[RMDB]
An RNA of 207 nucleotides, treated with DMS and 2A3 and read out base by base. DMS adducts were read by reverse transcription with MarathonRT. Values cover nucleotides 27 to 156. The reactions ran in a buffer of 150 mM KOAc, 10 mM MgCl2 and 150 mM bicine (pH 8.5), at 24 C. In probing experiments dimethyl sulfate is read out at A N1 and C N3, which are open when not base-paired. For 2A3, 1,114 sequencing reads were counted.
RNA sequence: GGGAACGACUCGAGUAGAGUCGAAAAUUCAAACGUAGUAGCAACGUGUAGAAGCUGCGAUAACACCAAGAGGACUUUAGAACAAGAAAUCUAUGGUACUGGUCAAAACAGAACGAAACAGAACACUGACCUACGACUUUCAGUGGCAGCGUGGGCGGAUAAUGCACGUGUUCGCACGUGCAUUAUCAAAAGAAACAACAACAACAAC
Reactivity to DMS in 0.01 (KOAc 150mM, MgCl2 10mM, bicine 150mM(pH8.5), 24C), signal-to-noise 1, nucleotides 027 to 156: u000u000c090a130a080a020c060g040u000a140g030u030a020g000c050a050a090c050g000u000g040u030a240g030a080a200g050c030u030g060c000g000a100u090a120a250c100a180c070c050a140a090g060a040g000g080a300c030u000u000u000a050g060a100a190c080a020a150g000a050a050a140u000c030u010a100u050g050g000u000a100c000u010g000g000u030c060a010a060a180a100c000a100g010a010a120c000g040a100a050a080c040a150g000a120a000c050a010c050u000g010a040c080c050u010a050c000g000a080c120u000u010u000c010a050g010u000g040g020c060a060g010c010g000u000g040g000g000c090g020
Reactivity to 2A3 in 0.01 (KOAc 150mM, MgCl2 10mM, bicine 150mM(pH8.5), 24C), signal-to-noise 2, nucleotides 027 to 156: u070u010c010a020a050a030c050g020u020a010g020u070a020g090c030a040a020c110g030u070g050u180a080g030a200a020g030c020u070g010c000g050a000u050a100a070c110a000c030c000a030a030g000a020g040g030a000c010u030u060u140a090g010a170a060c090a060a040g030a050a040a030u020c020u060a240u070g030g000u050a030c060u060g000g050u050c030a020a010a020a090c030a080g030a000a060c090g010a130a000a000c060a020g060a080a010c020a000c070u000g020a040c000c020u030a070c040g070a070c040u070u120u080c050a030g020u030g090g000c030a000g020c000g010u020g030g020g000c050g010